[RMDB]
RNA sequence: GGGAACGACUCGAGUAGAGUCGAAAAAAGCAAUUCAAAUCACCUGUAAUUCUACCUCCCAGAGAUAACCACUGUCAAUAUUUUUGUAUGUUUCCUUCCUAUUCAAAUUUCCAGUGGCCACAAAUGGUUAAAAAGAAUCCCAGCCUCUCUCAGAGUACAGUACGUUUUAGUUCGCUAAAACGUACUGAAAAGAAACAACAACAACAAC
Reactivity to 2A3 in 0.01 (KOAc 150mM, MgCl2 10mM, bicine 150mM(pH8.5), 24C), signal-to-noise 2, nucleotides 027 to 156: a000a000g070c070a080a040u130u090c070a080a020a190u020c010a040c090c020u060g030u160a070a150u050u080c040u090a110c040c000u030c020c000c000a020g000a000g000a120u060a060a050c000c000a000c040u040g060u070c040a060a060u010a090u150u110u050u110u060g070u030a160u040g020u020u060u010c020c000u020u110c000c010u040a050u050u120c060a100a090a090u020u060u040c020c010a000g000u010g030g050c010c000a040c040a020a120a040u090g020g000u060u060a080a100a030a000a030g070a010a020u000c000c000c030a030g030c000c030u010c000u000c000u020c020a020g030a000g150u090a040
Reactivity to DMS in 0.01 (KOAc 150mM, MgCl2 10mM, bicine 150mM(pH8.5), 24C), signal-to-noise 1, nucleotides 027 to 156: a020a020g050c050a060a070u000u000c060a100a100a170u010c050a050c040c010u000g030u020a080a080u010u000c050u010a080c030c010u000c000c030c030a140g050a120g000a180u000a110a020c020c020a040c040u010g020u010c040a080a080u040a040u030u000u000u000u000g000u030a050u010g000u000u000u000c000c010u000u010c070c000u010a080u000u010c030a010a050a160u010u010u000c040c020a090g050u000g020g010c010c000a120c060a040a100a050u010g010g010u000u000a030a070a070a130a030g000a080a080u000c000c000c000a100g010c030c010u000c010u000c060u000c040a080g000a170g030u000a130
Chemical mapping of a 207-nucleotide RNA with 2A3 and DMS. The RNA was probed in 150 mM KOAc, 10 mM MgCl2 and 150 mM bicine (pH 8.5) at 24 C.